[RMDB]
RNA sequence: GGGAACGACUCGAGUAGAGUCGAAAACAGUUCUGGUGGUGCUCUGAAUGGAGUGCUCUACUGAGAUUAUAAAAUAGAAGGUAAGCUAUUAUCUCUUACAACAAGGCAGGGCUUGUUGGAAUAGGCGUAAAGGCGAGCAGCUUCGGCUGCUCGCCAACUAUGGUAUAUAGUUCGCUAUAUACCAUAGAAAAGAAACAACAACAACAAC
Reactivity to 2A3 in 0.01 (KOAc 150mM, MgCl2 10mM, bicine 150mM(pH8.5), 24C), signal-to-noise 2, nucleotides 027 to 156: c050a040g040u110u060c020u090g030g020u040g000g040u020g020c030u000c010u070g300a150a150u280g020g050a020g000u030g000c000u040c070u090a070c090u120g060a000g010a080u080u080a080u220a150a120a070a010u100a000g020a100a020g100g000u060a020a040g000c030u040a070u090u010a030u090c030u000c030u070u030a020c000a110a020c010a040a060g050g010c010a000g060g070g040c000u000u000g000u000u000g020g020a050a060u050a050g050g000c030g070u120a150a010a000g000g000c000g010a000g000c070a000g000c030u020u050c110g090g010c000u010g050c000u000c060g020c030c000a000a000
This 207-nucleotide RNA was probed chemically with 2A3.
2A3 adducts were read by reverse transcription with SuperScript II with manganese.
Reactivities are given for positions 27 through 156.
The 2A3 profile rests on 853 reads.
Source: RMDB library M2RFPK, as collected in RNAgym.
The reactions ran in a buffer of 150 mM KOAc, 10 mM MgCl2 and 150 mM bicine (pH 8.5), at 24 C.